[RMDB]
An RNA of 177 nucleotides, treated with DMS and 2A3 and read out base by base. The RNA was probed in 150 mM KOAc, 10 mM MgCl2 and 150 mM bicine (pH 8.5) at 24 C. DMS adducts were read by reverse transcription with MarathonRT. For 2A3, 3,341 sequencing reads were counted. Values cover nucleotides 27 to 126. It was measured as part of the RMDB library TTRDES. The DMS profile rests on 1,812 reads.
RNA sequence: GGGAACGACUCGAGUAGAGUCGAAAAGAUAUGGAAACGAUGUGGGAGCGACUGGUCGGAAACGACCAGAUCGCGAAGAACACAGCGUUUCCUAAGUCAAACGCGUGAAUCUUCGGAUUCACGCGAACUAGACCAAGUGGUUCGCCACUUGGUCUAGAAAAGAAACAACAACAACAAC
Reactivity to DMS in 0.01 (KOAc 150mM, MgCl2 10mM, bicine 150mM(pH8.5), 24C), signal-to-noise 1, nucleotides 027 to 126: g000a020u000a090u000g000g000a000a030a020c000g010a030u000g040u000g010g040g030a240g040c000g030a030c010u010g000g020u030c000g030g010a030a000a090c010g020a010c000c000a010g000a040u010c000g010c000g000a080a110g020a150a100c010a010c010a040g000c010g000u000u000u000c000c010u000a000a070g000u000c010a110a040a210c030g020c010g000u010g020a000a000u000c000u010u010c300g010g040a010u000u000c000a000c000g020c010g010a000a040
Reactivity to 2A3 in 0.01 (KOAc 150mM, MgCl2 10mM, bicine 150mM(pH8.5), 24C), signal-to-noise 1, nucleotides 027 to 126: g000a000u010a000u080g000g030a010a000a010c000g020a000u030g020u010g040g060g090a300g060c010g000a000c000u000g000g040u020c000g000g010a010a000a000c020g000a020c000c020a000g000a040u010c000g000c010g010a030a000g090a010a000c000a000c000a020g020c010g000u000u000u000c000c010u000a010a000g020u010c020a140a060a180c010g010c000g000u050g000a000a010u030c020u070u230c300g090g020a020u010u020c020a010c000g000c010g000a010a010